Chemical mapping of a 177-nucleotide RNA with 2A3 and DMS. For DMS, 1,918 sequencing reads were counted. For 2A3, 1,856 sequencing reads were counted. Reactivities are given for positions 27 through 126. The data come from the RNA Mapping Database (RMDB), library OK1LIB. Conditions: 150 mM KOAc, 10 mM MgCl2 and 150 mM bicine (pH 8.5), 24 C.
RNA sequence: GGGAACGACUCGAGUAGAGUCGAAAAGAAAGAAACAAAAACCUACGGUAAAGAAAGAACGCCACACACGAAACCUGAGGAAACAGGAAAUACCGUAAAGAAAAAUGUGGUGAAAGAAAAGAAGAAAGACUAUCCAUACUUUCGAGUAUGGAUAGUCAAAAGAAACAACAACAACAAC
Reactivity to 2A3 in 0.01 (KOAc 150mM, MgCl2 10mM, bicine 150mM(pH8.5), 24C), signal-to-noise 2, nucleotides 027 to 126: g030a000a060a000g110a050a060a020c100a040a170a000a000a000c000c010u020a020c020g000g000u030a150a030a000g040a120a250a020g030a250a010c000g000c000c000a020c000a000c000a000c020g160a090a010a070c030c000u070g010a100g070g120a250a030a000c020a010g000g000a160a040a000u010a000c010c010g000u050a300a060a030g140a020a080a000a010a010u030g000u000g050g000u040g030a100a060a010g110a020a060a010a010g040a040a010g030a040a040a040
Reactivity to DMS in 0.01 (KOAc 150mM, MgCl2 10mM, bicine 150mM(pH8.5), 24C), signal-to-noise 2, nucleotides 027 to 126: g000a120a090a060g000a090a130a100c050a020a060a050a080a210c020c020u000a080c000g020g020u000a050a170a120g000a130a070a130g000a100a050c070g010c000c000a010c040a090c090a100c020g000a200a040a070c000c000u000g010a140g000g040a200a120a080c010a000g000g000a020a060a100u000a000c010c000g000u000a010a060a100g040a040a020a150a120a130u040g050u000g020g000u000g000a110a130a070g040a050a120a050a040g020a060a060g010a130a090a100